[RMDB]
RNA sequence: GGGAACGACUCGAGUAGAGUCGAAAAUGGUGUUAAGUGGAAUAAGUGGAAAAAUAUACAUAUAUGUACAGGGGGCUACAUAUAUGUAUAUGCCCCCUCUACUCAGUAUAAGUAGGUAUAAGGUGGACACCACUCACUAGUUCGCUAGUGAGUGGUGAAAAGAAACAACAACAACAAC
Reactivity to DMS in 0.01 (KOAc 150mM, MgCl2 10mM, bicine 150mM(pH8.5), 24C), signal-to-noise 2, nucleotides 027 to 126: u050g000g030u010g010u000u000a090a150g030u010g030g000a090a070u040a040a050g000u010g000g000a020a190a080a090a030u040a000u020a000c000a020u020a020u010a030u000g000u000a020c110a100g000g020g000g000g000c200u000a030c050a000u000a030u020a010u010g000u000a020u010a010u010g030c100c010c010c020c030u020c010u010a010c010u010c150a110g030u020a030u030a050a070g000u000a020g000g000u010a040u030a100a060g010g000u000g010g000a230
Reactivity to 2A3 in 0.01 (KOAc 150mM, MgCl2 10mM, bicine 150mM(pH8.5), 24C), signal-to-noise 1, nucleotides 027 to 126: u180g020g000u020g000u020u070a140a180g040u030g080g070a030a070u080a160a070g010u080g030g030a050a060a040a000a000u010a000u000a000c020a000u010a000u000a000u060g010u000a020c050a050g000g000g000g010g000c000u000a000c040a000u020a000u020a030u090g000u000a000u000a000u000g000c000c020c000c000c000u010c000u000a000c010u030c040a030g110u070a050u020a100a010g000u080a020g000g100u070a100u030a180a030g050g050u040g000g050a000
An RNA of 177 nucleotides, treated with DMS and 2A3 and read out base by base. The reactions ran in a buffer of 150 mM KOAc, 10 mM MgCl2 and 150 mM bicine (pH 8.5), at 24 C. For 2A3, 685 sequencing reads were counted. The DMS profile rests on 3,054 reads.